[RMDB]
RNA sequence: GGGAACGACUCGAGUAGAGUCGAAAAGGGGUCCACGUUUGUCAGGUAUCGGAACCCACUUGGAUUUAGGACUGAAGCCUCCACGGUCCUUGUCAGUGGAAACGAUACCUUGGAUUUAACGUGGACGGAGGCACCCAAACUCGUGUUCGCACGAGAAGUGAUAAGUUAUAUUCGUAUAACUUAUCACAAAAGAAACAACAACAACAAC
Reactivity to DMS in 0.01 (KOAc 150mM, MgCl2 10mM, bicine 150mM(pH8.5), 24C), signal-to-noise 3, nucleotides 027 to 156: g030g020g010g010u000c000c000a010c010g030u000u010u000g010u000c030a070g020g030u000a020u010c000g010g000a130a240c190c000c020a040c030u010u010g030g010a080u000u000u000a030g030g010a040c010u020g000a060a130g010c050c020u000c020c030a300c040g030g000u010c010c000u000u000g010u010c020a050g020u010g030g000a130a070a170c010g010a040u000a010c000c000u010u010g020g010a060u000u010u000a000a000c020g040u000g020g000a020c020g020g010a050g040g050c000a160c010c000c000a070a090a120c000u000c010g030u000g010u010u000c300g040c020a020c020g010a020g010a060a160
Reactivity to 2A3 in 0.01 (KOAc 150mM, MgCl2 10mM, bicine 150mM(pH8.5), 24C), signal-to-noise 9, nucleotides 027 to 156: g140g010g010g000u020c000c000a000c000g000u000u010u030g060u040c050a010g000g000u000a000u010c010g010g050a140a170c040c030c010a010c030u110u200g150g000a080u300u200u230a030g000g000a000c010u020g040a100a030g050c010c020u020c020c010a040c020g000g010u000c000c000u000u030g030u010c010a010g000u010g010g030a150a100a040c000g000a000u000a000c000c000u000u070g010g000a010u070u140u300a000a000c000g000u000g000g000a000c000g000g000a000g000g010c020a070c010c000c000a040a080a090c000u000c010g000u010g020u080u090c240g020c090a000c010g010a010g020a040a030